[RMDB]
RNA sequence: GGGAACGACUCGAGUAGAGUCGAAAAGAUAUGGAGAUGAUGCAACAGCUGUAGGUCGGAAACGACCUGACAGACAUGCGCAUCUCCUAAGUCAAAACGUAAGCCGACGUUCGCGUCGGCUUACGAACAUAAUCUCUCAGUUCGCUGAGAGAUUAUGAAAAGAAACAACAACAACAAC
Reactivity to DMS in 0.01 (KOAc 150mM, MgCl2 10mM, bicine 150mM(pH8.5), 24C), signal-to-noise 7, nucleotides 027 to 126: g000a020u000a190u010g000g000a010g010a010u000g000a060u010g020c000a020a180c300a150g010c000u000g000u010a010g000g010u010c000g010g000a050a030a090c000g010a010c000c000u000g010a020c000a000g020a080c180a140u000g010c010g000c000a010u000c000u000c000c010u000a000a050g000u000c020a100a080a100a220c010g010u000a000a000g010c000c000g010a020c000g020u000u010c200g020c010g010u000c000g010g000c000u000u000a000c000g000a060a100
Reactivity to 2A3 in 0.01 (KOAc 150mM, MgCl2 10mM, bicine 150mM(pH8.5), 24C), signal-to-noise 2, nucleotides 027 to 126: g010a000u020a000u050g010g010a010g000a000u020g030a080u110g020c010a100a120c090a300g060c010u010g010u020a000g000g010u010c000g010g000a030a000a010c010g000a000c000c020u030g030a010c000a010g080a110c090a100u020g000c000g000c000a010u020c000u000c000c010u000a000a000g000u000c020a000a000a110a160c030g020u010a010a010g000c010c000g010a030c010g040u100u180c300g020c010g100u020c000g010g000c000u000u000a000c000g000a000a000